[RMDB]
Conditions: 150 mM KOAc, 10 mM MgCl2 and 150 mM bicine (pH 8.5), 24 C. Structure probing data (2A3 and DMS) for a 177-nucleotide construct.
RNA sequence: GGGAACGACUCGAGUAGAGUCGAAAAGAUAUGGACGUGUCGACUGUGGAUGCCACUCGGAAACGAGGAGCUAAUCCACUGUCGAGCACGUCCUAAGUCAAAAGAGCUGCCGUUCGCGGCAGCUCAACCCUACUGAGAAGUUCGCUUCUCAGUAGGGAAAAGAAACAACAACAACAAC
Reactivity to 2A3 in 0.01 (KOAc 150mM, MgCl2 10mM, bicine 150mM(pH8.5), 24C), signal-to-noise 2, nucleotides 027 to 126: g010a010u120a030u150g000g010a010c000g000u000g000u060c010g010a000c010u030g020u010g000g010a000u030g040c030c000a110c040u010c000g010g020a060a090a050c030g010a010g020g000a030g010c030u170a180a060u010c000c020a010c000u030g000u000c000g000a010g000c000a000c010g000u000c000c000u000a000a010g010u000c010a060a080a040a050g000a010g000c000u000g030c040c010g050u050u130c300g030c030g160g000c000a000g020c000u010c000a010a000
Reactivity to DMS in 0.01 (KOAc 150mM, MgCl2 10mM, bicine 150mM(pH8.5), 24C), signal-to-noise 3, nucleotides 027 to 126: g000a040u000a300u010g000g000a020c010g020u000g000u000c010g010a020c000u000g020u000g000g010a020u000g020c030c180a170c000u010c000g000g010a120a080a180c000g010a000g000g010a300g010c020u000a090a080u000c000c000a010c000u000g000u000c000g000a050g000c020a000c000g010u000c000c000u000a020a040g010u000c050a070a070a140a150g000a030g020c000u000g010c000c000g020u000u010c240g020c020g020g000c010a000g010c010u000c000a010a050
Source information
The DMS profile rests on 3,092 reads. Source: RMDB library TTRDEL, as collected in RNAgym.